[RMDB]
RNA sequence: GGGAACGACUCGAGUAGAGUCGAAAAGAUAUGGACUGUCCUACUUACUGAUGACCUCGGAAACGAGCAAGGUAUGUAGGAGCAGUCCUAAGUCAAAGUGACAGUAGCGUUCGCGCUACUGUCACAAGAUGGUCUGCUAGUUCGCUAGCAGACCAUCAAAAGAAACAACAACAACAAC
Reactivity to DMS in 0.01 (KOAc 150mM, MgCl2 10mM, bicine 150mM(pH8.5), 24C), signal-to-noise 1, nucleotides 027 to 126: g000a010u000a300u000g000g000a000c000u000g000u000c000c000u000a040c000u000u010a000c020u000g000a100u000g000a080c300c010u000c000g000g000a070a120a210c010g000a010g010c010a100a050g010g020u000a000u000g000u000a000g000g000a040g000c010a000g010u000c010c010u000a000a110g000u010c020a100a080a070g000u010g010a010c000a010g000u000a000g000c000g040u010u000c200g010c010g050c010u000a000c000u010g000u000c010a000c000a040a070
Reactivity to 2A3 in 0.01 (KOAc 150mM, MgCl2 10mM, bicine 150mM(pH8.5), 24C), signal-to-noise 1, nucleotides 027 to 126: g050a000u120a020u130g010g010a000c000u020g040u020c000c010u010a000c000u020u010a000c000u010g240a300u160g050a200c030c030u000c010g020g000a080a070a050c020g050a020g060c030a020a220g020g010u020a000u030g000u000a020g000g060a030g000c000a000g010u000c000c000u000a080a010g050u010c030a120a010a110g010u000g000a000c010a000g000u030a000g040c050g040u080u130c300g030c000g000c210u000a000c000u010g020u020c000a000c010a000a020